[RMDB]
RNA sequence: GGGAACGACUCGAGUAGAGUCGAAAAUUUGGUUCCGAAGACGAUGAAGGCACCAAGAACAAUCGCAGCUGAGCCUUUGCCUGCACAAUAUGUGCAGCAGGCGAUUCGUUCUUACUUAUAUCGUAAGCCUUGGUAGUGGUUUCGACCACUACCAAGGAAAAGAAACAACAACAACAAC
Reactivity to DMS in 0.01 (KOAc 150mM, MgCl2 10mM, bicine 150mM(pH8.5), 24C), signal-to-noise 2, nucleotides 027 to 126: u000u000u000g020g010u020u000c000c000g020a100a100g020a040c030g000a010u010g000a070a170g000g020c120a130c200c160a030a010g000a020a020c020a010a020u000c010g000c020a190g020c070u050g000a120g040c090c150u000u000u010g000c160c070u000g000c010a010c010a240a110u000a060u000g010u000g000c020a000g030c030a020g000g000c000g010a020u000u000c220g020u000u010c000u000u000a100c070u000u000a110u020a040u000c050g010u000a080a080g030
Reactivity to 2A3 in 0.01 (KOAc 150mM, MgCl2 10mM, bicine 150mM(pH8.5), 24C), signal-to-noise 3, nucleotides 027 to 126: u080u030u080g070g000u040u010c010c000g060a060a030g140a000c030g040a020u030g030a020a030g030g000c060a020c060c050a060a000g010a020a000c010a010a000u030c030g010c040a070g070c100u140g130a100g090c060c040u130u130u120g030c040c010u040g050c030a010c020a080a270u220a150u300g000u010g000c020a000g000c000a000g040g020c000g000a000u000u000c080g000u000u000c000u000u010a020c000u030u060a140u020a010u270c000g050u020a040a040g060